The record gives the reactivity of an RNA of 177 nucleotides to DMS and 2A3.

[RMDB]
RNA sequence: GGGAACGACUCGAGUAGAGUCGAAAACAAACUAACUUCGGUUAGUUUGAAAGAACGCUGCAACGCGCAGAGCUCUCGCGAGAGCGCGAAUGCAGAAAGAAAAAAGAUAAUCGUUCGCGAUUAUCAACCGUAUUAGAUUCUUCGGAAUCUAAUACGGAAAAGAAACAACAACAACAAC
Reactivity to DMS in 0.01 (KOAc 150mM, MgCl2 10mM, bicine 150mM(pH8.5), 24C), signal-to-noise 3, nucleotides 027 to 126: c010a010a000a010c000u010a010a000c000u000u010c170g030g020u000u000a000g010u010u000u000g000a040a120a140g000a160a150c180g010c000u000g000c000a030a210c020g030c000g010c010a030g000a280g000c020u000c120u000c270g000c140g010a110g030a090g000c000g000c000g000a070a070u020g000c000a000g000a060a030a090g010a000a030a020a070a070a040g010a010u010a010a010u000c020g020u000u010c200g020c010g000a030u000u010a010u000c000a090a160
Reactivity to 2A3 in 0.01 (KOAc 150mM, MgCl2 10mM, bicine 150mM(pH8.5), 24C), signal-to-noise 2, nucleotides 027 to 126: c000a000a000a000c010u000a000a000c000u010u040c120g030g000u000u000a000g000u010u040u010g020a020a000a000g060a090a010c070g000c070u000g010c010a020a080c010g000c010g000c000a010g030a060g150c010u030c050u070c170g070c070g030a020g010a010g050c010g000c000g020a090a010u050g000c020a000g020a040a130a040g070a020a110a000a000a000a000g020a000u010a000a010u000c010g020u040u050c270g050c010g100a000u010u010a000u000c010a000a030